[RMDB]
Overview
Source: RMDB library OK3TST, as collected in RNAgym. This 207-nucleotide RNA was probed chemically with DMS and 2A3. 2A3 adducts were read by reverse transcription with SuperScript II with manganese. The reactions ran in a buffer of 150 mM KOAc, 10 mM MgCl2 and 150 mM bicine (pH 8.5), at 24 C. For DMS the reverse transcriptase was MarathonRT. Values cover nucleotides 27 to 156.

RNA sequence: GGGAACGACUCGAGUAGAGUCGAAAAGGGGACCCUGAGCUAAGGCAAACACAGCUCCUAUCCUAGAGGAAUAUCCAAUCUGAUGGGAGAGGUAGACACAUAGAUGUGCAAAUUCCUAAGUAGUAUGAAUGGGUUAGGAAGUGAUUGCCUGUCCUGGCCGAGACAUAACUUUCGAGUUAUGUCUCGGAAAAGAAACAACAACAACAAC
Reactivity to DMS in 0.01 (KOAc 150mM, MgCl2 10mM, bicine 150mM(pH8.5), 24C), signal-to-noise 1, nucleotides 027 to 156: g000g020g000g000a140c090c010c010u030g010a170g030c090u010a070a030g010g040c010a020a090a130c050a100c020a070g050c240u000c010c010u010a030u000c010c000u000a090g000a190g030g040a130a040u010a090u000c050c070a050a200u000c050u010g010a190u010g010g000g010a060g030a060g030g010u000a140g000a120c070a050c040a300u000a110g010a110u000g000u000g000c030a070a040a100u000u000c010c000u000a080a120g020u010a130g000u030a200u000g000a210a160u000g030g000g050u000u010a040g000g030a010a010g000u010g000a080u000u000g000c010c080u000g010u000c030c010u000g000g050
Reactivity to 2A3 in 0.01 (KOAc 150mM, MgCl2 10mM, bicine 150mM(pH8.5), 24C), signal-to-noise 3, nucleotides 027 to 156: g000g000g000g050a070c000c000c090u130g090a050g030c110u130a120a050g000g000c010a000a030a020c010a000c010a040g080c060u000c010c000u010a010u020c000c000u020a020g020a040g080g040a200a040u050a040u080c010c010a010a040u030c020u090g080a130u190g110g020g020a030g010a000g030g060u060a050g060a040c020a000c000a050u130a160g170a220u100g010u010g040c020a010a080a150u050u050c000c000u000a040a030g040u040a040g020u060a150u130g060a120a020u100g010g030g000u020u030a000g000g000a000a070g010u010g050a070u000u020g000c010c020u020g010u030c000c010u000g110g000